[RMDB]
RNA sequence: GGGAACGACUCGAGUAGAGUCGAAAAGAAAGAAAGAAAGAAUCCAAGUGAUGACUGAAUGAAGUCUCGUUCGUCUGAAAAUCUUUGAAGAAUACUCCUUUUAGCAUGGUGGAGUUCUGAUGGAAAACACUGCGCUUUUAUUCGUAAAAGCGCAGUGAAAAGAAACAACAACAACAAC
Reactivity to 2A3 in 0.01 (KOAc 150mM, MgCl2 10mM, bicine 150mM(pH8.5), 24C), signal-to-noise 4, nucleotides 027 to 126: g090a050a130a010g100a020a070a040g100a050a100a040g050a060a050u010c020c020a080a020g100u080g070a040u120g010a020c070u090g020a010a020u050g030a110a020g130u050c040u000c120g020u020u010c000g000u000c030u070g030a090a040a020a080u020c040u130u070u100g060a120a040g000a040a030u060a130c010u020c020c000u100u100u120u190a210g060c120a130u220g100g020u010g020g030a050g000u030u040c020u010g040a080u050g000g010a000a050a000a000
Reactivity to DMS in 0.01 (KOAc 150mM, MgCl2 10mM, bicine 150mM(pH8.5), 24C), signal-to-noise 3, nucleotides 027 to 126: g010a080a090a050g000a050a080a050g010a050a040a160g010a130a080u050c040c050a080a080g020u020g000a070u010g000a030c010u020g030a040a040u000g000a030a200g000u030c190u020c020g040u000u000c050g020u000c010u020g000a130a050a100a110u010c010u000u000u000g010a150a080g040a050a030u030a050c020u010c000c000u000u000u000u030a050g020c140a080u000g000g020u010g000g000a050g000u000u010c020u000g000a200u000g010g000a030a020a110a110

This 177-nucleotide RNA was probed chemically with 2A3 and DMS.
2A3 is a SHAPE reagent: it acylates the 2'-hydroxyl of flexible nucleotides of all four kinds.
For DMS the reverse transcriptase was MarathonRT.
For 2A3 the reverse transcriptase was SuperScript II with manganese.
Conditions: 150 mM KOAc, 10 mM MgCl2 and 150 mM bicine (pH 8.5), 24 C.
It was measured as part of the RMDB libraries RFM100 and RFMREP.